[RMDB]
RNA sequence: GGGAACGACUCGAGUAGAGUCGAAAAGAUAUGGACGAUCACAGGGAGAAUGAGUAUCGGAAACGAUACUAUUCAUCGAUCUGUAUCGUCCUAAGUCAAAAGGACUCUUGGUUCGCCAAGAGUCCAACACAUACUUGGACUUCGGUCCAAGUAUGUGAAAAGAAACAACAACAACAAC
Reactivity to DMS in 0.01 (KOAc 150mM, MgCl2 10mM, bicine 150mM(pH8.5), 24C), signal-to-noise 3, nucleotides 027 to 126: g000a020u000a200u000g000g000a000c010g030a010u010c240a030c050a020g020g020g030a260g000a030a010u010g010a030g020u000a010u000c000g000g000a050a050a060c010g010a010u010a000c000u010a050u000u010c020a300u000c230g000a140u010c000u000g010u000a000u000c010g010u000c000c000u000a010a050g010u010c020a070a070a150a110g020g010a010c000u000c000u000u000g000g010u010u020c300g040c000c000a010a010g010a020g010u000c000c000a010a070
Reactivity to 2A3 in 0.01 (KOAc 150mM, MgCl2 10mM, bicine 150mM(pH8.5), 24C), signal-to-noise 4, nucleotides 027 to 126: g010a000u020a010u080g000g000a000c010g020a010u050c170a100c080a080g080g120g050a290g040a080a050u260g150a110g010u010a000u020c010g000g010a020a000a000c010g010a000u010a010c000u020a040u010u020c020a060u300c140g140a180u030c010u000g020u040a010u010c010g000u000c000c000u000a000a000g000u000c000a000a020a080a220g000g020a010c010u010c000u010u010g070g000u050u180c300g060c110c010a000a000g000a000g000u000c000c000a000a000